[RMDB]
RNA sequence: GGGAACGACUCGAGUAGAGUCGAAAAGGGGUCCAAAUUUCGAGAGGGGUAGAUCGUAUUUCCCCUAAAGGACAUGCUCUGAAGCCUCCACGGAGCAACAGCCUUUAGGGGAAAUACGAUCUACCCUACCCACCUCGAACUUUGGACGGAGGCACCCGUAUGGUAGAAGGUUCGCCUUCUACCAUACAAAAGAAACAACAACAACAAC
Reactivity to DMS in 0.01 (KOAc 150mM, MgCl2 10mM, bicine 150mM(pH8.5), 24C), signal-to-noise 2, nucleotides 027 to 156: g030g000g040g010u020c000c000a010a000a020u000u010u020c000g000a040g020a240g040g000g010g040u000a000g000a030u000c000g000u040a080u000u000u000c000c000c000c020u000a040a020a030g020g020a070c050a300u000g000c000u000c000u000g000a090a140g030c060c020u000c050c050a300c050g000g000a020g030c010a030a090c090a180g030c010c000u000u000u020a010g060g030g030g000a000a000a000u000a010c030g000a000u000c000u000a000c010c000c010u000a000c010c000c020a300c120c010u000c000g000a010a010c180u000u000u010g000g000a030c010g000g010a040g000g020c010a150c020c030c030
This 207-nucleotide RNA was probed chemically with DMS. Conditions: 150 mM KOAc, 10 mM MgCl2 and 150 mM bicine (pH 8.5), 24 C.